[RMDB]
RNA sequence: GGGAACGACUCGAGUAGAGUCGAAAAAGUAAAGUGGCAUAUUCUGCCAAUCCAUUACAAAGCCCUUCAAGCUUGGAACCAUAACAGCCUUAGCGUUCGAGUAGAACAGUGGUACGUAUGGAAGAUCGAUAUAGUCAGUAUUCGUACUGACUAUAUCAAAAGAAACAACAACAACAAC
Reactivity to DMS in 0.01 (KOAc 150mM, MgCl2 10mM, bicine 150mM(pH8.5), 24C), signal-to-noise 9, nucleotides 027 to 126: a120g010u010a030a060a110g020u000g010g010c010a040u010a200u010u010c120u000g000c010c000a050a110u010c060c060a100u000u000a030c040a070a120a170g000c010c010c010u000u010c130a130a180g010c060u000u000g020g020a090a130c020c030a060u000a050a060c070a180g000c060c040u000u000a110g020c150g010u000u000c010g010a120g000u010a110g000a030a050c060a050g010u000g010g020u000a060c300g010u000a020u000g000g010a120a080g010a080u010c150
Reactivity to 2A3 in 0.01 (KOAc 150mM, MgCl2 10mM, bicine 150mM(pH8.5), 24C), signal-to-noise 9, nucleotides 027 to 126: a000g100u110a050a050a020g050u040g020g000c020a020u050a130u300u110c060u030g000c000c000a000a030u010c010c000a030u040u030a030c030a050a080a070g020c000c000c000u030u070c090a100a040g010c020u060u110g120g020a040a050c010c010a030u040a100a090c020a050g070c010c030u070u120a050g060c030g060u010u010c020g020a060g100u150a020g130a050a010c030a030g010u060g090g020u070a040c100g010u020a020u030g030g050a040a020g070a070u190c080